Structure probing data (DMS and 2A3) for a 177-nucleotide construct. The data come from the RNA Mapping Database (RMDB), library OK1LIB. For 2A3, 3,770 sequencing reads were counted. The DMS profile rests on 2,107 reads. Conditions: 150 mM KOAc, 10 mM MgCl2 and 150 mM bicine (pH 8.5), 24 C.

[RMDB]
RNA sequence: GGGAACGACUCGAGUAGAGUCGAAAAUUGGUGAGGCAAGAGAAAUUUUUGCACUUCUUGAGUGGUAGCUCAGUAUUGGGGUAUCUGCUCAGACUCCCCCAUAAGCCCAUCGCUUCUUAUCCUCCCACUCCUUCCUAGGUUUCGACCUAGGAAGGAGAAAAGAAACAACAACAACAAC
Reactivity to DMS in 0.01 (KOAc 150mM, MgCl2 10mM, bicine 150mM(pH8.5), 24C), signal-to-noise 2, nucleotides 027 to 126: u050u000g050g000u030g000a020g000g000c150a050a100g020a130g000a030a180a090u000u070u000u010u010g030c030a130c080u020u040c040u030u020g000a010g020u000g010g000u000a040g010c000u010c020a050g030u040a070u030u000g000g000g000g000u000a030u010c000u000g090c040u000c080a040g000a130c150u000c070c000c000c010c070a100u070a050a080g010c010c000c040a050u000c050g020c070u010u030c000u040u000a060u040c020c050u000c030c070c040a100
Reactivity to 2A3 in 0.01 (KOAc 150mM, MgCl2 10mM, bicine 150mM(pH8.5), 24C), signal-to-noise 6, nucleotides 027 to 126: u100u100g010g010u090g020a090g010g060c040a070a000g070a010g120a090a140a180u120u140u040u090u060g120c110a100c100u070u040c030u140u110g020a030g010u020g020g070u100a070g050c000u010c040a070g090u230a250u210u130g000g000g000g000u050a040u040c020u070g040c020u010c020a010g010a020c010u040c000c010c000c000c000a010u010a090a040g010c010c020c010a040u050c090g020c060u070u040c000u030u110a070u070c010c020u010c000c010c010a030